[RMDB]
About this RNA: Structure probing data (2A3 and DMS) for a 170-nucleotide construct. The 2A3 profile rests on 8,308 reads. Source: RMDB library 15KLIB, as collected in RNAgym. The reactions ran in a buffer of 150 mM KOAc, 10 mM MgCl2 and 150 mM bicine (pH 8.5), at 24 C. DMS adducts were read by reverse transcription with MarathonRT. The DMS profile rests on 8,797 reads.

RNA sequence: GGGAACGACUCGAGUAGAGUCGAAAACGACGGGUAGGCUCAUCCUGAGACCGGGGAGCUUCGAAGAUCUCUCUAUUCUCCAGAAAGGAGGAAGGAGCUCUCGAACGCCCCCCCGACCCUCGGAUGGAUAGUCAAGGCUUCGGCCUUGACAAAAGAAACAACAACAACAAC
Reactivity to 2A3 in 0.01 (KOAc 150mM, MgCl2 10mM, bicine 150mM(pH8.5), 24C), signal-to-noise 3, nucleotides 027 to 129: c050g120a030c070g010g020g050u070a030g060g000c020u020c020a030u020c010c090u180g000a010g000a020c010c000g000g000g000g000a010g000c000u000u000c010g010a110a030g000a030u000c020u010c000u000c000u060a260u130u010c000u000c020c000a060g270a300a150a110g050g000a000g000g000a010a040g010g000a010g000c000u000c000u000c000g000a000a020c120g030c040c000c000c000c000c000c010g040a040c050c000c000u020c010g000g020a010u020g000g040a050u070a030
Reactivity to DMS in 0.01 (KOAc 150mM, MgCl2 10mM, bicine 150mM(pH8.5), 24C), signal-to-noise 1, nucleotides 027 to 129: c080g040a070c080g000g030g030u050a020g000g000c010u000c050a040u040c000c000u100g000a020g000a160c150c130g020g000g030g030a240g040c010u000u000c000g010a090a120g020a010u000c010u000c020u020c060u100a130u050u000c030u030c000c020a170g070a160a140a130g110g010a020g060g020a010a060g020g020a060g010c060u010c010u020c010g030a020a020c180g000c000c070c010c020c020c000c070g000a060c080c060c000u010c010g010g020a060u020g000g070a100u050a060